Notes:
An RNA of 177 nucleotides, treated with DMS and 2A3 and read out base by base. 2A3 adducts were read by reverse transcription with SuperScript II with manganese.

RNA sequence: GGGAACGACUCGAGUAGAGUCGAAAAGCUCGGUGACACCGCGUCUGCCUGGGUCCGAAAGAUUUCUUGUCGCAAAUCUACAAGACAUUGGUUAACGUGUGGGCCGCUUGAGCGGCCGCUCGGCGGGUCAUCGUAUGGUCUUCGGGCCGUGCGAUGAAAAAGAAACAACAACAACAAC
Reactivity to DMS in 0.01 (KOAc 150mM, MgCl2 10mM, bicine 150mM(pH8.5), 24C), signal-to-noise 3, nucleotides 027 to 126: g000c010u000c020g000g020u010g010a090c100a120c020c010g000c020g000u010c070u010g010c020c010u000g010g000g000u010c000c010g010a130a140a050g000a030u000u000u000c020u010u030g010u040c210g000c180a030a040a030u000c020u010a050c130a160a070g000a020c040a080u000u010g000g000u010u020a100a160c050g000u010g000u010g010g020g020c000c000g000c000u020u050g010a090g010c010g020g010c050c040g020c010u000c030g000g010c000g000g000g010
Reactivity to 2A3 in 0.01 (KOAc 150mM, MgCl2 10mM, bicine 150mM(pH8.5), 24C), signal-to-noise 7, nucleotides 027 to 126: g030c010u010c020g040g040u050g050a030c020a030c130c010g020c010g040u010c050u050g030c000c010u050g050g000g050u010c010c020g070a120a110a000g010a010u010u040u040c040u080u180g130u160c070g030c130a030a060a080u040c010u030a030c040a140a010g010a010c030a060u020u110g040g010u100u150a080a020c010g010u030g010u150g060g080g010c010c010g020c040u190u300g050a040g050c000g010g020c010c000g000c010u010c010g060g000c020g030g000g000

Values cover nucleotides 27 to 126.